[RMDB]
RNA sequence: GGGAACGACUCGAGUAGAGUCGAAAAGAUAUGGAUGACAGCGAUGAGUCCACGGUCGGAAACGACCGCGGACGAGCUGUAUCCUAAGUCAAAGAUUCUGUGCAGUCUUCGGACUGCACAGAAUCAAGUACACAUGGUUCUUCGGAACCAUGUGUACAAAAGAAACAACAACAACAAC
Reactivity to DMS in 0.01 (KOAc 150mM, MgCl2 10mM, bicine 150mM(pH8.5), 24C), signal-to-noise 2, nucleotides 027 to 126: g020a040u000a300u000g010g010a020u000g000a020c000a000g020c000g010a140u020g000a300g020u000c000c030a010c000g010g000u010c020g000g000a140a110a200c000g010a000c010c000g020c000g000g000a010c010g000a030g000c000u000g010u000a030u000c000c000u000a010a070g000u000c030a130a130a180g000a010u010u000c000u010g000u000g010c000a010g000u010c010u000u010c200g000g000a040c000u000g000c000a000c000a000g000a000a000u000c000a010a100
Reactivity to 2A3 in 0.01 (KOAc 150mM, MgCl2 10mM, bicine 150mM(pH8.5), 24C), signal-to-noise 1, nucleotides 027 to 126: g030a020u050a050u160g030g010a020u120g140a050c010a000g010c030g250a270u200g150a130g020u000c000c000a000c040g020g000u000c020g020g000a080a040a010c000g000a010c010c020g030c000g020g000a010c000g000a000g000c000u010g000u000a000u000c000c000u030a150a010g050u000c040a110a030a140g000a010u020u000c000u000g010u020g000c030a000g000u040c020u020u090c170g050g000a010c010u020g020c000a000c000a000g020a000a010u000c000a000a000